[RMDB]
RNA sequence: GGGAACGACUCGAGUAGAGUCGAAAACUGUUGAUAAUGCCAUUUUUGCACGAGUAAACUUAUUAUAGAUUGCUGGUUCGCCACGCAUGACAAAGUUACCACUCAUUAUUGCAAUAGUAACGUCAGCCUACAUCAACCGGUUCGCCGGUUGAUGUAGAAAAGAAACAACAACAACAAC
Reactivity to DMS in 0.01 (KOAc 150mM, MgCl2 10mM, bicine 150mM(pH8.5), 24C), signal-to-noise 2, nucleotides 027 to 126: c040u000g060u010u010g020a000u010a140a180u010g010c050c080a070u020u010u000u000u000g020c010a040c300g000a020g000u000a050a060a010c040u000u000a070u030u000a170u010a060g000a090u000u000g020c030u000g010g000u000u000c210g010c000c020a000c210g010c000a010u000g030a300c250a020a000a050g000u010u020a090c160c110a020c030u000c020a090u010u000a120u020u000g000c010a000a010u000a020g000u020a070a070c240g010u020c050a010g000c080
Reactivity to 2A3 in 0.01 (KOAc 150mM, MgCl2 10mM, bicine 150mM(pH8.5), 24C), signal-to-noise 2, nucleotides 027 to 126: c000u010g000u040u030g040a030u020a120a140u110g020c060c020a190u120u090u000u060u080g020c000a020c050g000a000g000u010a030a040a010c010u010u040a070u220u100a130u200a080g050a040u020u010g010c000u000g010g030u030u040c150g030c040c020a040c160g000c000a020u030g020a000c040a010a050a030g010u010u020a050c060c060a010c020u030c020a030u050u160a130u160u090g000c020a030a020u010a060g010u050a030a010c030g020u000c020a000g020c000